[RMDB]
RNA sequence: GGGAACGACUCGAGUAGAGUCGAAAAGGGAUAACACAUACACCAGUGAGGUAUCCUGGAACAGUACGAUGCCCUGAGUGAGCAGCAGCGGCACCAUCGCGCGGAACGCCUGCGGCAGAAUAAUCAGGCAGAGUGAAUUGUUCGCAAUUCACUCUGCAAAAGAAACAACAACAACAAC
Reactivity to DMS in 0.01 (KOAc 150mM, MgCl2 10mM, bicine 150mM(pH8.5), 24C), signal-to-noise 1, nucleotides 027 to 126: g010g020g000a020u010a050a130c080a100c120a080u000a160c120a100c060c060a070g040u010g020a130g020g020u010a010u000c020c010u000g010g010a060a080c130a050g000u000a040c100g010a100u000g010c110c010c020u010g050a050g020u000g000a100g000c000a060g020c000a030g020c050g000g000c060a070c020c020a050u010c110g000c090g000c060g030g020a050a080c130g000c030c030u000g000c050g020g010c020a080g010a090a020u020a010a070u000c130a040g000
Reactivity to 2A3 in 0.01 (KOAc 150mM, MgCl2 10mM, bicine 150mM(pH8.5), 24C), signal-to-noise 1, nucleotides 027 to 126: g060g000g000a020u040a010a090c060a010c020a090u300a050c000a080c070c000a050g020u010g090a030g120g090u030a060u030c010c070u010g000g030a030a060c030a030g050u120a010c040g030a060u080g020c020c000c080u030g080a040g000u090g020a050g040c080a000g000c010a000g030c040g040g010c060a010c060c000a090u160c050g020c100g000c070g090g060a070a010c040g040c000c080u170g000c060g050g000c010a000g030a220a030u280a030a060u160c080a020g060

This 177-nucleotide RNA was probed chemically with DMS and 2A3.
Conditions: 150 mM KOAc, 10 mM MgCl2 and 150 mM bicine (pH 8.5), 24 C.
For DMS the reverse transcriptase was MarathonRT.